[RMDB]
Source: RMDB library OK2TST, as collected in RNAgym. The record gives the reactivity of an RNA of 177 nucleotides to 2A3 and DMS. For DMS the reverse transcriptase was MarathonRT. The DMS profile rests on 6,134 reads. For 2A3 the reverse transcriptase was SuperScript II with manganese. Values cover nucleotides 27 to 126.

RNA sequence: GGGAACGACUCGAGUAGAGUCGAAAAACGAUCCCCUUCUCGGUGAGCGUGGAGAUGCGGGCGCCGCGACCGACCGAGGGCCACAGCGGGGUCUCGUAGGUGGCCAGGGGAAUGUCGACGGCGUCGAUAGCACUAAUGCAUUCGUGCAUUAGUGCUAAAAAGAAACAACAACAACAAC
Reactivity to 2A3 in 0.01 (KOAc 150mM, MgCl2 10mM, bicine 150mM(pH8.5), 24C), signal-to-noise 3, nucleotides 027 to 126: a010c040g020a090u020c000c010c000c040u100u060c030u020c020g000g060u100g070a130g060c050g040u040g040g080a070g010a040u110g100c130g030g020g010c000g000c000c000g000c000g000a010c000c010g010a000c000c000g030a100g000g010g040c000c000a010c000a000g010c020g000g040g060g220u080c120u060c110g020u050a170g200g000u000g010g000c020c010a010g040g010g000g030a040a140u080g000u000c010g010a230c000g000g020c000g000u000c000g000a000
Reactivity to DMS in 0.01 (KOAc 150mM, MgCl2 10mM, bicine 150mM(pH8.5), 24C), signal-to-noise 4, nucleotides 027 to 126: a070c120g010a090u010c010c010c000c040u000u010c030u000c030g010g010u000g010a080g020c030g020u000g010g020a130g020a090u010g020c140g030g010g000c020g020c010c000g000c000g000a030c010c110g010a170c020c010g010a130g010g010g010c010c010a020c020a210g000c000g000g000g020g000u010c100u010c020g030u010a060g010g020u000g000g000c000c020a140g010g000g010g030a070a090u000g000u000c000g010a150c010g010g000c010g020u000c010g010a080